[RMDB]
RNA sequence: GGGAACGACUCGAGUAGAGUCGAAAAAGCUCGCGCAAAUCGGCGGCGCGCUGCUUAUCGAACCGAACAAAACCGCCGUCAGUACGCUCGUGCGCCUGCCCGAAAGCGUACGCCUAAUCGAAGGCACCCAUGAUGGAGCGUUCGCGCUCCAUCAUGGAAAAGAAACAACAACAACAAC
Reactivity to DMS in 0.01 (KOAc 150mM, MgCl2 10mM, bicine 150mM(pH8.5), 24C), signal-to-noise 1, nucleotides 027 to 126: a090g010c000u000c000g000c060g120c020a060a040a040u000c050g000g000c040g020g000c000g010c000g010c110u000g060c020u020u010a120u010c130g000a210a160c040c000g010a090a120c220a090a010a090a070c040c090g030c000c010g090u000c300a040g000u000a060c000g010c000u000c100g000u020g020c050g040c070c040u060g010c060c050c000g050a050a120a080g060c010g030u040a010c040g040c000c030u000a090a090u040c170g000a020a030g000g010c040a110c230
Reactivity to 2A3 in 0.01 (KOAc 150mM, MgCl2 10mM, bicine 150mM(pH8.5), 24C), signal-to-noise 3, nucleotides 027 to 126: a000g010c020u010c000g000c000g060c080a050a030a240u100c020g020g000c010g000g000c000g010c010g000c050u020g000c000u030u030a110u220c060g020a060a040c010c000g070a080a010c090a120a120a010a000c050c030g000c000c000g010u000c030a030g000u010a000c010g010c000u010c040g030u050g040c050g160c030c120u190g000c000c000c000g030a050a060a010g000c000g010u000a010c020g000c000c000u110a140a090u220c140g110a120a010g000g000c000a070c000
An RNA of 177 nucleotides, treated with DMS and 2A3 and read out base by base. Conditions: 150 mM KOAc, 10 mM MgCl2 and 150 mM bicine (pH 8.5), 24 C. High 2A3 reactivity points to a flexible backbone, as in loops and unpaired stretches. Values cover nucleotides 27 to 126. For 2A3, 1,947 sequencing reads were counted. The DMS profile rests on 1,258 reads.